The record gives the reactivity of an RNA of 177 nucleotides to 2A3. Conditions: 150 mM KOAc, 10 mM MgCl2 and 150 mM bicine (pH 8.5), 24 C. It was measured as part of the RMDB library OK1LIB. Reactivities are given for positions 27 through 126.

RNA sequence: GGGAACGACUCGAGUAGAGUCGAAAAGGUGACGCGAAUCCUAUUUUAUUAAUUGAUGAAGAUGAUGUACAAGCUGGUCAUGCUGCAUCAGUAGGUCGUGUUGAUCCAGAUCAACUUUACUAUUUAACUCGGUUGUUGGGUUCGCCCAACAACCGAGAAAAGAAACAACAACAACAAC
Reactivity to 2A3 in 0.01 (KOAc 150mM, MgCl2 10mM, bicine 150mM(pH8.5), 24C), signal-to-noise 1, nucleotides 027 to 126: g020g050u060g000a000c000g000c000g000a050a130u200c000c000u000a030u000u300u000u030a080u030u110a190a190u080u050g050a050u060g100a020a020g000a000u010g000a010u010g000u050a000c150a050a150g000c180u050g090g000u130c110a110u070g050c000u000g020c030a000u000c000a000g010u000a000g000g000u020c000g000u030g010u000u000g000a020u030c000c000a000g000a060u000c000a020a020c000u090u000u090a100c060u090a120u000u110u060a020a040